RNA sequence: GGGAACGACUCGAGUAGAGUCGAAAACAAUCUUCUCUGCGAUUGCGGCAAUCUGCUGCUUCCGCUGUUCAAACGUGGCUAAAUCAAAAUCGCGGAUAGACGCUUUGAGCUUCGCUUCAUUAGCGUUCGCCGUCAGGUCGUUAAACCAGACAUAGCCAACCGUAUAGGGAUUCGUCCCUAUACGGUUAAAAGAAACAACAACAACAAC
Reactivity to DMS in 0.01 (KOAc 150mM, MgCl2 10mM, bicine 150mM(pH8.5), 24C), signal-to-noise 4, nucleotides 027 to 156: c090a100a090u010c050u010u000c090u000c040u020g020c030g010a090u000u010g020c030g020g030c040a100a120u000c140u000g010c010u000g010c020u000u010c050c030g030c020u010g000u020u000c060a050a100a140c080g020u000g020g020c010u000a020a150a150u010c050a080a060a060a040u020c070g010c010g010g000a100u010a070g010a030c010g020c010u000u000u000g010a030g000c020u010u000c150g040c060u010u000c030a060u010u000a050g040c030g030u000u000c100g040c020c000g020u010c020a100g010g010u000c000g020u010u010a060a090a140c040c020a150g000a080c070a170u000a040g010c020c080
Reactivity to 2A3 in 0.01 (KOAc 150mM, MgCl2 10mM, bicine 150mM(pH8.5), 24C), signal-to-noise 5, nucleotides 027 to 156: c060a060a170u070c070u160u000c040u030c030u050g010c010g060a060u050u060g000c000g010g000c030a060a230u140c200u270g000c000u010g000c000u020u000c030c020g000c030u070g070u140u150c140a160a120a070c100g030u040g020g000c010u030a130a070a090u100c080a050a120a040a150u130c060g000c010g000g020a050u080a090g030a000c010g000c000u050u020u020g010a010g000c030u200u220c140g030c060u110u050c160a080u060u070a010g010c000g010u080u100c040g000c000c000g060u070c050a040g000g040u040c030g050u130u150a080a080a050c060c020a030g020a040c030a050u070a000g000c010c000

This 207-nucleotide RNA was probed chemically with DMS and 2A3.
The reactions ran in a buffer of 150 mM KOAc, 10 mM MgCl2 and 150 mM bicine (pH 8.5), at 24 C.
Source: RMDB library OK3TST, as collected in RNAgym.
The DMS profile rests on 9,308 reads.